[RMDB]
RNA sequence: GGGAACGACUCGAGUAGAGUCGAAAAUUUGUGAGGGUGAGGCGUGUCAGUGUAUGCGGAUACAUUAACGUGAAGGGGAGAUCAUGGUGGUGUGGUCCGCCUCUUGUUUUUGGCCAAACCUUGCGAGCUAUAUUAAAAAUUUCGAUUUUUAAUAUAGAAAAGAAACAACAACAACAAC
Reactivity to DMS in 0.01 (KOAc 150mM, MgCl2 10mM, bicine 150mM(pH8.5), 24C), signal-to-noise 3, nucleotides 027 to 126: u010u010u040g020u010g000a030g000g000g020u010g000a300g000g010c010g040u020g010u010c020a070g020u010g010u020a040u020g000c090g000g000a030u010a030c000a010u000u010a050a040c000g000u000g010a020a050g000g000g010g000a160g010a040u000c010a020u010g010g010u010g000g010u000g020u000g000g020u000c020c030g000c010c000u000c010u010u000g000u010u010u010u020u010g010g010c010c000a030a270a080c000c010u000u000g010c010g010a050g010
Reactivity to 2A3 in 0.01 (KOAc 150mM, MgCl2 10mM, bicine 150mM(pH8.5), 24C), signal-to-noise 2, nucleotides 027 to 126: u040u040u060g000u000g030a010g040g110g150u080g030a020g000g010c020g010u060g030u050c020a010g030u010g020u040a060u100g000c000g000g000a000u010a010c000a000u010u000a080a000c000g000u010g030a050a010g030g030g020g010a100g000a010u010c000a000u000g010g020u010g000g000u010g010u010g030g020u000c000c010g030c020c000u010c000u000u000g070u010u080u040u060u150g100g000c000c000a020a000a000c000c000u000u040g000c010g000a000g020

Source information
This 177-nucleotide RNA was probed chemically with DMS and 2A3. For DMS, 9,766 sequencing reads were counted. The reactions ran in a buffer of 150 mM KOAc, 10 mM MgCl2 and 150 mM bicine (pH 8.5), at 24 C. It was measured as part of the RMDB library OK1LIB.